The data come from the RNA Mapping Database (RMDB), library TTRDEL. An RNA of 177 nucleotides, treated with DMS and 2A3 and read out base by base. The RNA was probed in 150 mM KOAc, 10 mM MgCl2 and 150 mM bicine (pH 8.5) at 24 C. 2A3 adducts were read by reverse transcription with SuperScript II with manganese. Reactivities are given for positions 27 through 126.
RNA sequence: GGGAACGACUCGAGUAGAGUCGAAAAGAUAUGGAGGUGACUUCGACGAUCGUGGGAUCGGAAACGAUCCGUAACAUCGGGAGAAGCAAUGCCUCCUAAGUCAAACCCGUAAGUUCGCUUACGGGAAGAGUACGAAUCAGUUCGCUGAUUCGUACUCAAAAGAAACAACAACAACAAC
Reactivity to DMS in 0.01 (KOAc 150mM, MgCl2 10mM, bicine 150mM(pH8.5), 24C), signal-to-noise 3, nucleotides 027 to 126: g020a040u000a300u020g000g030a000g020g010u000g020a120c010u000u000c010g030a300c030g000a010u000c210g020u000g000g010g020a000u000c000g010g010a080a080a140c010g020a010u000c010c010g050u030a120a040c130a020u000c000g000g010g000a300g000a020a000g000c060a080a070u010g000c000c000u000c000c000u000a020a100g000u000c040a050a120a200c010c010c000g000u000a030a020g000u000u010c250g000c000u000u000a000c000g010g000g020a020a020
Reactivity to 2A3 in 0.01 (KOAc 150mM, MgCl2 10mM, bicine 150mM(pH8.5), 24C), signal-to-noise 3, nucleotides 027 to 126: g010a020u050a070u140g000g010a020g000g020u160g240a290c000u000u010c030g040a040c010g000a030u080c220g010u100g060g000g000a020u020c000g010g000a040a040a020c000g010a000u000c010c030g030u140a030a010c000a020u020c020g020g070g050a210g010a010a030g000c060a030a050u090g000c000c000u000c000c000u030a110a010g050u020c020a090a030a050c010c000c000g000u010a000a000g020u030u250c300g000c190u000u000a000c000g000g000g000a010a030